[RMDB]
RNA sequence: GGGAACGACUCGAGUAGAGUCGAAAACAGAUGCCGUUCGCGGCAUCUGAAAGUGACGGUGAAAAAUGGCCAAGGUGCCAGCUACCACCGACACAGGGGGCAAAAGAGGAUUCUUCGGAAUCCUCAACUAACGUUGGUUGUUCGCAACCAACGUUAGAAAAGAAACAACAACAACAAC
Reactivity to DMS in 0.01 (KOAc 150mM, MgCl2 10mM, bicine 150mM(pH8.5), 24C), signal-to-noise 1, nucleotides 027 to 126: c020a020g030a030u000g000c000c020g010u000u000c240g020c000g010g010c000a000u000c000u000g000a030a080a120g040u000g010a110c020g030g000u010g000a010a060a100a280a080u000g000g010c000c030a190a090g000g010u040g010c010c000a020g050c100u030a190c120c030a000c000c000g030a050c000a000c040a210g000g000g030g000g010c300a040a070a210a100g010a000g010g000a030u000u000c000u000u030c130g020g000a020a000u000c000c000u010c000a000a070